[RMDB]
RNA sequence: GGGAACGACUCGAGUAGAGUCGAAAAAAUGGCUGAUGUGGCGCCCCUUGGUAAAGGGCUUAAAGGGUAUUAGCCUGCCAUGUCCAAUGGCAUGAGAGUGUCCCUUGGUAAAGGACUUAAUAGGCAAACACAUAAACUAGUUCGCUAGUUUAUGUGUAAAAGAAACAACAACAACAAC
Reactivity to 2A3 in 0.01 (KOAc 150mM, MgCl2 10mM, bicine 150mM(pH8.5), 24C), signal-to-noise 9, nucleotides 027 to 126: a000a000u150g060g020c040u050g010a040u040g010u020g030g000c000g010c000c010c000c000u000u020g020g000u050a030a040a020g010g000g010c000u030u060a060a050a020g060g000g000u050a060u170u230a110g020c000c000u000g000c010c000a010u030g020u000c020c020a090a110u120g020g000c010a020u040g040a040g010a010g090u090g040u050c020c000c000u010u030g060g000u120a070a050a030g030g010a010c000u060u110a100a070u100a150g090g000c040a080a080
Reactivity to DMS in 0.01 (KOAc 150mM, MgCl2 10mM, bicine 150mM(pH8.5), 24C), signal-to-noise 9, nucleotides 027 to 126: a050a040u020g010g010c040u010g010a030u010g020u000g000g000c030g000c010c000c010c010u000u000g010g010u010a170a150a130g000g000g000c020u000u000a020a020a060g010g000g010u010a010u030u010a230g010c000c010u000g000c000c000a010u000g010u010c030c250a090a060u020g000g000c000a030u020g000a080g000a080g010u010g000u010c000c010c020u000u010g000g000u020a050a090a110g000g000a050c030u010u010a050a080u020a090g010g000c150a110a100
Background
Chemical mapping of a 177-nucleotide RNA with 2A3 and DMS. 2A3 adducts were read by reverse transcription with SuperScript II with manganese. Conditions: 150 mM KOAc, 10 mM MgCl2 and 150 mM bicine (pH 8.5), 24 C.